[RMDB]
RNA sequence: GGGAACGACUCGAGUAGAGUCGAAAAGGCUAAGAGCUACGCCUUGAGCGACCCGAAGGGCUUCGGCUCCUUUGUGGAGAAGGCCCCGCAAAUCGUGCCGAUGGACAAGAUUGAGCUGGACGACGUCAAGGCCCUCAAGAGCGACGCGCUGGACGCCGCGUGUAGCAAUGUUCGCAUUGCUACACGCAAAAGAAACAACAACAACAAC
Reactivity to 2A3 in 0.01 (KOAc 150mM, MgCl2 10mM, bicine 150mM(pH8.5), 24C), signal-to-noise 1, nucleotides 027 to 156: g040g000c040u040a110a000g000a020g020c010u020a020c000g000c000c000u050u000g050a050g000c020g050a090c000c000c000g010a010a000g090g000g000c030u070u100c130g140g000c000u150c010c010u130u240u210g210u300g050g020a010g070a040a050g030g040c070c000c000c000g010c060a060a090a020u080c020g000u130g040c000c010g060a030u150g000g110a090c060a140a150g080a080u040u180g050a040g030c080u110g000g040a000c000g000a010c010g070u040c130a100a140g000g010c000c000c000u000c030a000a040g020a040g060c010g080a150c060g040c010g020c010u040g000g000a030c040g040c040c120
Overview
Conditions: 150 mM KOAc, 10 mM MgCl2 and 150 mM bicine (pH 8.5), 24 C. The record gives the reactivity of an RNA of 207 nucleotides to 2A3. Values cover nucleotides 27 to 156.